[RMDB]
Source: RMDB library M2RFOK, as collected in RNAgym. This 207-nucleotide RNA was probed chemically with DMS and 2A3.
RNA sequence: GGGAACGACUCGAGUAGAGUCGAAAACCGCACUACAUUUUACUGUUCCUAAAGAAUUUGUGACAGGUACAGUAAAACGUAUUGCAAGGUUUAUCAGUUCCUAUAAACAGGUAAAUAACAAUAUAUGAAAAGCAAAGACUGUUCGCAGUCUUUGCAACGUUCGUGUAAUGUUCGCAUUACACGAACGAAAAGAAACAACAACAACAAC
Reactivity to DMS in 0.01 (KOAc 150mM, MgCl2 10mM, bicine 150mM(pH8.5), 24C), signal-to-noise 2, nucleotides 027 to 156: c020c000g000c020a080c020u000a050c010a020u020u010u000u010a020c010u010g040u010u000c000c010u000a090a160a170g050a170a140u010u000u020g040u000g010a240c170a020g010g020u000a030c010a040g000u000a000a010a030a000c020g020u010a020u000u020g040c030a120a140g070g000u000u000u000a030u010c060a100g030u000u000c020c020u000a220u000a090a080a080c070a100g000g040u000a060a110a130u000a070a080c060a090a220u000a240u000a110u000g000a090a080a130a200g020c010a030a010a020g000a010c000u000g020u000u020c300g030c010a030g020u000c000u000u030u020g050c000a000a010
Reactivity to 2A3 in 0.01 (KOAc 150mM, MgCl2 10mM, bicine 150mM(pH8.5), 24C), signal-to-noise 6, nucleotides 027 to 156: c000c000g000c000a000c010u000a000c000a020u000u000u010u000a000c000u000g000u020u050c010c000u080a100a150a050g160a260a270u220u300u290g150u110g070a080c090a060g000g000u000a000c000a000g000u000a000a000a000a000c010g000u000a000u000u000g000c020a110a130g030g010u010u020u030a140u110c020a010g020u010u020c000c000u040a080u210a070a070a020c070a020g040g070u070a060a110a110u200a150a070c050a130a030u120a020u060a050u270g080a080a090a020a010g000c000a000a000a000g000a000c000u010g040u070u050c180g000c080a000g000u000c000u000u000u000g000c000a000a000

Source information
Reactivities are given for positions 27 through 156. For DMS the reverse transcriptase was MarathonRT. 2A3 adducts were read by reverse transcription with SuperScript II with manganese.